[RMDB]
RNA sequence: GGGAACGACUCGAGUAGAGUCGAAAAUACUUAGUUCGCGCGUAGUUGCAGGCAUUCCGGGUGCAGCAACUGACGCGGAAGACUUUUCCCAGAGUGUGCGCUUCAACUGGCGUGCUGAGUAGUGCACGAAUUGCACGUACGUUCGCGUACGUGCAAACAAUUUUAAUACCUUCGGGUAUUAAAAUUGAAAAGAAACAACAACAACAAC
Reactivity to 2A3 in 0.01 (KOAc 150mM, MgCl2 10mM, bicine 150mM(pH8.5), 24C), signal-to-noise 3, nucleotides 027 to 156: u120a020c020u060u040a000g010u050u000c060g020c000g000c010g170u010a000g000u010u010g030c060a120g110g000c010a030u070u110c130c210g220g050g000u000g020c010a030g000c010a010a000c010u040g100a030c010g000c010g000g000a020a010g050a020c010u100u080u010u010c000c000c010a020g020a010g030u070g010u010g020c010g000c030u080u080c080a160a160c110u100g050g000c060g010u050g030c030u000g000a030g030u120a040g020u070g020c030a000c050g050a080a100u070u010g000c010a000c000g010u000a010c010g010u020u030c190g000c010g100u000a010c010g020u010g000c000a010a000a000
Reactivity to DMS in 0.01 (KOAc 150mM, MgCl2 10mM, bicine 150mM(pH8.5), 24C), signal-to-noise 3, nucleotides 027 to 156: u000a060c060u000u000a090g020u000u000c020g020c010g020c010g040u000a070g030u000u000g030c010a130g010g000c010a030u000u000c000c300g000g060g100u000g010c010a300g000c000a030a020c020u000g010a020c020g020c010g000g010a020a070g010a090c080u000u010u000u000c010c000c000a250g000a180g020u000g010u000g000c040g010c030u000u000c030a050a110c070u010g010g010c050g000u000g000c020u010g020a100g040u000a060g020u000g010c030a060c030g000a090a170u010u000g010c010a020c000g010u000a000c000g020u000u010c300g040c030g060u000a010c000g010u000g000c000a000a010a100